[RMDB]
RNA sequence: GGGAACGACUCGAGUAGAGUCGAAAACGUAUGGUUCAAAAAGAUACUUUGAAUUAAGAAGUACAAUAAAGUUAACUUCAUUAGACAAAAAGAAAAAACAAGGAAGAAUAGUACAUAGUUAUAAAUACAUAUGCUGUAGCUUCGGCUACAGCAUAUGAAAAGAAACAACAACAACAAC
Reactivity to DMS in 0.01 (KOAc 150mM, MgCl2 10mM, bicine 150mM(pH8.5), 24C), signal-to-noise 1, nucleotides 027 to 126: c120g000u010a110u010g030g000u000u070c100a000a040a060a170a030g000a140u050a060c010u030u000u000g000a160a080u050u000a070a090g000a090a050g000u000a030c080a020a130u070a100a070a050g000u010u010a020a010c000u000u000c010a030u020u000a070g020a010c130a080a050a090a120a010g000a000a050a120a100a080a110c220a100a090g040g020a030a090g000a080a020u060a080g000u000a060c060a080u000a160g010u000u010a060u050a030a060a120u000a240
Reactivity to 2A3 in 0.01 (KOAc 150mM, MgCl2 10mM, bicine 150mM(pH8.5), 24C), signal-to-noise 1, nucleotides 027 to 126: c030g000u110a150u180g020g040u000u000c110a080a060a000a030a070g130a110u110a070c070u000u000u000g040a050a000u030u010a000a260g000a000a000g000u020a060c140a030a210u160a270a130a000g060u040u070a090a070c000u000u000c090a100u030u150a000g000a100c060a000a000a000a090a060g300a200a080a130a000a040a000c030a040a010g000g070a010a090g140a020a000u100a030g000u030a030c110a290u010a060g010u110u140a040u000a240a110a000u110a010